[RMDB]
RNA sequence: GGGAACGACUCGAGUAGAGUCGAAAAGACAAGAAUAAGAGGGACAAGAAUCUGACCUGCAGCUCCUCGUGGUGUCCCUCGGAAACGUGCUCAACGCGCGCCCGACGCAGGCAGAAAGUAAGAAGAAAUUAGUAUCCUAGUUCGCUAGGAUACUAAUAAAAGAAACAACAACAACAAC
Reactivity to 2A3 in 0.01 (KOAc 150mM, MgCl2 10mM, bicine 150mM(pH8.5), 24C), signal-to-noise 8, nucleotides 027 to 126: g130a040c080a040a030g120a070a060u150a080a020g010a010g020g010g000a000c030a040a090g110a130a160u050c000u010g130a300c010c000u010g010c020a030g020c010u040c020c020u090c070g110u090g060g030u060g000u000c000c000c000u010c000g000g020a040a050a010c020g010u020g000c000u080c170a120a130c100g010c000g000c010g010c010c000c010g020a020c060g000c010a000g010g000c000a000g020a030a040a010g110u220a030a080g050a080a000g060a020a220
Reactivity to DMS in 0.01 (KOAc 150mM, MgCl2 10mM, bicine 150mM(pH8.5), 24C), signal-to-noise 6, nucleotides 027 to 126: g040a150c140a060a120g020a100a060u000a120a110g010a030g010g010g000a030c020a060a150g000a100a070u030c000u000g000a070c010c010u000g020c000a150g000c070u010c050c040u000c120g020u010g010g020u000g020u000c000c010c010u010c010g000g000a040a100a110c040g020u010g020c020u030c210a110a130c200g000c020g010c040g010c040c010c020g020a060c090g000c010a010g000g000c010a000g000a110a080a090g020u020a060a070g010a110a110g000a080a080